Background
This 207-nucleotide RNA was probed chemically with DMS and 2A3. Conditions: 150 mM KOAc, 10 mM MgCl2 and 150 mM bicine (pH 8.5), 24 C.
RNA sequence: GGGAACGACUCGAGUAGAGUCGAAAACAAUGAAGGAGGGUCUGUGAUAUAACACGCGUCGUAUAAUUCAAUGUAUAUCCCGCAGGAUGAAUAAAUUCACAACGAUCCCUAAAUGGACCAAAUAUACGUCUCUCGUGACGCAAGAACAUGAAUGUGAAAUCAAUUGAUCAUUCGUGAUCAAUUGAUUAAAAGAAACAACAACAACAAC
Reactivity to DMS in 0.01 (KOAc 150mM, MgCl2 10mM, bicine 150mM(pH8.5), 24C), signal-to-noise 4, nucleotides 027 to 156: c060a080a100u000g010a120a120g000g010a100g020g010g020u000c020u020g050u010g010a090u000a120u000a090a100c070a080c090g020c060g050u000c050g030u010a070u010a050a110u000u010c120a070a090u000g010u000a070u000a090u000c010c010c000g020c030a080g000g010a130u000g010a110a110u010a050a080a140u000u000c020a040c030a090a060c080g000a060u010c010c010c010u000a060a090a090u000g000g000a080c030c020a040a070a120u010a160u000a050c010g010u000c020u000c140u000c150g000u010g020a050c020g000c030a030a080g000a040a070c060a100u010g020a070a050u010g010u000g020a090
Reactivity to 2A3 in 0.01 (KOAc 150mM, MgCl2 10mM, bicine 150mM(pH8.5), 24C), signal-to-noise 4, nucleotides 027 to 156: c040a020a140u150g040a050a020g070g060a030g030g020g010u020c040u030g030u020g060a020u050a030u060a180a050c080a020c070g010c000g030u030c030g020u070a030u050a150a080u100u090c050a040a030u110g020u030a070u010a040u090c010c020c040g000c030a030g020g080a060u090g020a040a040u110a100a070a070u070u050c050a020c000a110a080c090g040a040u050c000c020c010u060a090a090a070u100g020g000a010c040c000a020a070a000u190a010u030a040c030g030u000c020u000c030u040c090g090u120g000a000c000g010c050a030a030g030a050a030c050a090u160g090a170a030u180g050u090g050a030
Reactivities are given for positions 27 through 156.